[RMDB]
Source: RMDB library OK2TST, as collected in RNAgym. This 177-nucleotide RNA was probed chemically with DMS and 2A3. The RNA was probed in 150 mM KOAc, 10 mM MgCl2 and 150 mM bicine (pH 8.5) at 24 C. For 2A3 the reverse transcriptase was SuperScript II with manganese.
RNA sequence: GGGAACGACUCGAGUAGAGUCGAAAAUCGCCCACUCCGGAUCUGCUUUAAUCGGGCUGGUAAUGCCGUCCAUUACCACAUCUUCCGGCAGGAUCACCGGCAGCUGGUCGUCCGGGGUCGGCAUUACCUGGCCAUUAUGUUUCGACAUAAUGGCCAGAAAAGAAACAACAACAACAAC
Reactivity to DMS in 0.01 (KOAc 150mM, MgCl2 10mM, bicine 150mM(pH8.5), 24C), signal-to-noise 3, nucleotides 027 to 126: u010c170g020c000c000c040a100c060u000c020c020g010g010a040u010c100u010g030c100u010u000u000a130a090u000c210g010g000g040c050u010g010g000u000a030a010u000g010c120c130g020u020c130c000a080u010u000a060c020c030a020c120a090u000c050u000u000c010c030g020g040c100a060g020g010a080u020c110a140c020c020g000g010c110a050g000c140u000g000g010u000c160g000u000c050c020g000g010g010g000u000c290g010g000c010a040u000u000a050c040
Reactivity to 2A3 in 0.01 (KOAc 150mM, MgCl2 10mM, bicine 150mM(pH8.5), 24C), signal-to-noise 2, nucleotides 027 to 126: u060c030g020c020c000c010a030c020u020c010c010g000g070a090u060c020u090g070c050u170u160u240a090a050u140c050g010g030g000c060u020g020g010u000a010a020u020g070c080c020g070u030c020c010a020u020u080a040c020c010a020c010a050u020c010u070u010c020c020g000g000c020a090g110g100a110u080c040a030c010c010g020g000c010a010g000c000u040g030g020u050c020g010u000c030c010g000g020g000g020u000c020g000g000c000a010u050u020a060c000
Reactivities are given for positions 27 through 126.